[RMDB]
Structure probing data (2A3) for a 207-nucleotide construct.
RNA sequence: GGGAACGACUCGAGUAGAGUCGAAAACAAGCACAAGUAGGGAUAAGCUUGAGAGGCUGACCUGGCUCUUCCUACAGUGGUACUUCAAUCAAUAACUCAUAGAAUUGUCUAAGGGCCACUAUUGAUAACAAAUACCUUCUUUCUGUGUGCUUAGAGCAUUCCCGUCUCGAUUCGUCGAGACGGGAAUAAAAGAAACAACAACAACAAC
Reactivity to 2A3 in 0.01 (KOAc 150mM, MgCl2 10mM, bicine 150mM(pH8.5), 24C), signal-to-noise 2, nucleotides 027 to 156: c020a000a000g020c000a010c010a030a090g050u020a010g120g000g010a070u060a120a030g000c040u110u120g010a100g030a070g150g080c110u120g060a150c000c000u020g000g010c000u020c020u070u010c000c000u060a080c080a060g050u040g020g000u010a060c030u030u060c060a020a030u020c000a030a090u050a220a230c020u020c030a060u030a120g060a120a070u220u150g070u180c070u100a010a100g030g000g010c010c070a000c040u040a040u040u110g010a030u020a150a000c020a000a000a020u070a070c010c000u080u200c020u020u300u040c070u090g090u010g000u010g050c030u060u030a060g030a010g110c000

For 2A3, 582 sequencing reads were counted. Values cover nucleotides 27 to 156. It was measured as part of the RMDB library OK3TST.